[RMDB]
Chemical mapping of a 177-nucleotide RNA with DMS and 2A3. For DMS the reverse transcriptase was MarathonRT. As a SHAPE reagent, 2A3 marks flexible, mostly unpaired nucleotides at the ribose 2'-OH. For DMS, 1,536 sequencing reads were counted. Conditions: 150 mM KOAc, 10 mM MgCl2 and 150 mM bicine (pH 8.5), 24 C. Source: RMDB library RFM100, as collected in RNAgym.
RNA sequence: GGGAACGACUCGAGUAGAGUCGAAAACAACGCCGAGAGGCGACGCUAAUCUCCAAACGGAGUCGUAGUUCGGAUUGCGGGCUGAAACCCGCCCGCAUGAAGCUGGAUUCGGUAGUAAUCGCGUGUCGUGACCGUAACCAUUCGUGGUUACGGUCACAAAAGAAACAACAACAACAAC
Reactivity to DMS in 0.01 (KOAc 150mM, MgCl2 10mM, bicine 150mM(pH8.5), 24C), signal-to-noise 1, nucleotides 027 to 126: c160a010a220c040g040c010c000g000a260g000a130g000g010c060g000a030c120g000c020u020a200a100u040c020u040c000c050a050a040a140c170g050g000a000g010u000c020g010u010a040g000u020u040c040g040g000a030u000u000g000c000g090g000g000c020u070g020a000a150a080c250c080c050g000c000c000c000g000c000a000u000g040a300a060g010c020u000g000g010a010u020u010c000g000g000u000a010g020u020a040a190u050c110g010c030g000u000g000u030c080
Reactivity to 2A3 in 0.01 (KOAc 150mM, MgCl2 10mM, bicine 150mM(pH8.5), 24C), signal-to-noise 4, nucleotides 027 to 126: c050a030a030c030g010c000c000g030a060g000a010g010g030c010g030a010c010g000c040u050a050a070u110c020u020c050c050a140a150a200c050g060g000a010g020u040c020g130u120a050g010u060u210c060g000g000a030u010u040g010c000g000g000g010c010u100g060a140a130a170c020c060c020g010c000c000c000g000c000a020u030g030a020a020g010c010u020g020g000a030u020u020c010g010g020u020a030g040u010a060a070u070c010g010c020g000u050g040u080c080